Record summary: Structure probing data (2A3 and DMS) for a 177-nucleotide construct. The 2A3 profile rests on 964 reads. DMS adducts were read by reverse transcription with MarathonRT. The DMS profile rests on 1,056 reads. Conditions: 150 mM KOAc, 10 mM MgCl2 and 150 mM bicine (pH 8.5), 24 C.
RNA sequence: GGGAACGACUCGAGUAGAGUCGAAAACAAGGGUGGCGGUGAGGCCGCAGCGGCGUUUCGCCUGGAGUUCCGCGGUGAUGCGGAAGACCGGGGCGGGGAGGAGGUGGACUUCGUCGUAGAUGAUGAGGACACAAUGUCCGUUCGCGGACAUUGUGUCAAAAGAAACAACAACAACAAC
Reactivity to 2A3 in 0.01 (KOAc 150mM, MgCl2 10mM, bicine 150mM(pH8.5), 24C), signal-to-noise 1, nucleotides 027 to 126: c080a030a030g080g000g020u070g000g060c060g030g070u110g070a060g060g090c020c040g000c040a010g040c030g060g000c010g010u030u060u080c020g040c010c020u000g010g000a020g160u020u030c000c000g030c000g040g130u240g060a080u200g000c020g000g010a000a040g060a020c030c040g020g000g010g010c040g000g000g000g030a010g010g000a040g020g030u060g060g030a100c040u060u070c070g000u000c020g040u060a060g010a150u140g010a010u040g030a050g060
Reactivity to DMS in 0.01 (KOAc 150mM, MgCl2 10mM, bicine 150mM(pH8.5), 24C), signal-to-noise 1, nucleotides 027 to 126: c100a110a170g000g000g000u000g000g010c160g040g000u000g010a060g030g020c010c040g010c090a110g000c050g030g010c060g010u010u000u000c020g000c000c020u010g020g040a190g010u020u000c000c000g030c020g000g020u050g010a090u000g020c040g000g010a050a040g000a130c050c010g040g000g000g020c030g020g000g010g020a100g010g010a100g000g060u010g020g000a140c050u000u000c050g020u000c040g020u000a200g000a130u010g000a070u000g000a050g000